[RMDB]
RNA sequence: GGGAACGACUCGAGUAGAGUCGAAAAGAUAUGGACUGUGAACUACAGCUGGGAGAGCGAAGAACUCGGAAACGAGGGAGCUCGAACAGCUGCACAGUCCUAAGUCAAACGUACCUUCGGGUACGAAGACCUUGUGAAUGUUCGCAUUCACAAGGUCAAAAGAAACAACAACAACAAC
Reactivity to 2A3 in 0.01 (KOAc 150mM, MgCl2 10mM, bicine 150mM(pH8.5), 24C), signal-to-noise 2, nucleotides 027 to 126: g060a040u070a030u110g000g000a000c000u030g010u010g030a110a070c090u180a080c300a000g020c000u030g000g050g030a110g000a000g050c040g060a300a090g000a060a040c010u000c030g050g030a080a030a040c010g000a000g060g000g000a010g000c010u000c000g000a020a010c010a010g010c000u000g000c000a000c000a000g000u030c000c000u000a020a000g000u010c010a070a060a040c020g000u010a000c000c000u030u030c290g130g020g000u010a010c000g010a020a010
Reactivity to DMS in 0.01 (KOAc 150mM, MgCl2 10mM, bicine 150mM(pH8.5), 24C), signal-to-noise 2, nucleotides 027 to 126: g000a040u010a300u010g000g000a000c030u000g000u000g010a130a070c040u020a300c000a000g020c000u000g000g000g000a300g000a090g020c000g000a030a130g020a090a280c000u000c010g000g000a070a110a140c000g030a010g000g000g000a090g010c000u000c000g010a300a130c000a000g000c000u010g020c000a000c000a000g010u000c000c000u000a010a030g000u030c020a070a010a170c040g000u000a020c030c010u000u000c180g040g000g000u000a000c050g010a020a060